RNA sequence: GGGAACGACUCGAGUAGAGUCGAAAAGCUCCUUUGCGCUUUUUUUUCGGAUUAGCCGUGGAGGCGAAAGUCACCCUCCUCGCAUCGCAAGUUCGUGCUUGCGACUUACACGUAGGGCGAGGGGUGGAAAACAGUAUGGGAUUCGUCCCAUACUGAAACACAGUGAAAGGUUCGCCUUUCACUGUGUAAAAGAAACAACAACAACAAC
Reactivity to DMS in 0.01 (KOAc 150mM, MgCl2 10mM, bicine 150mM(pH8.5), 24C), signal-to-noise 2, nucleotides 027 to 156: g020c070u000c020c030u000u000u000g030c060g060c000u000u000u000u000u000u000u000u000c210g020g030a190u000u000a100g040c030c010g000u010g000g000a070g030g000c040g000a030a020a100g010u010c000a060c010c000c000u010c010c020u000c040g060c170a120u000c020g040c000a000a020g030u000u020c250g030u000g040c020u020u000g010c020g000a040c050u010u000a140c150a060c110g030u000a060g000g030g000c040g000a000g010g000g020g010u010g040g010a060a060a070a160c060a050g030u000a010u000g000g000g000a110u000u000c290g000u000c000c000c000a000u000a000c000u000g000a050a070
Reactivity to 2A3 in 0.01 (KOAc 150mM, MgCl2 10mM, bicine 150mM(pH8.5), 24C), signal-to-noise 3, nucleotides 027 to 156: g020c030u040c000c010u070u040u100g100c110g000c080u090u110u030u030u060u030u080u140c140g040g000a040u060u150a130g080c020c060g040u020g010g060a040g030g000c010g030a020a010a020g040u030c020a050c020c020c000u000c000c000u000c000g000c000a070u040c000g010c020a020a000g000u140u220c120g150u300g080c010u000u000g000c000g000a000c000u060u110a040c120a040c070g250u150a080g000g140g000c010g010a000g000g000g000g010u140g000g040a050a110a010a000c000a000g000u000a000u010g010g020g000a010u020u050c160g020u000c020c000c000a010u010a000c000u000g000a000a010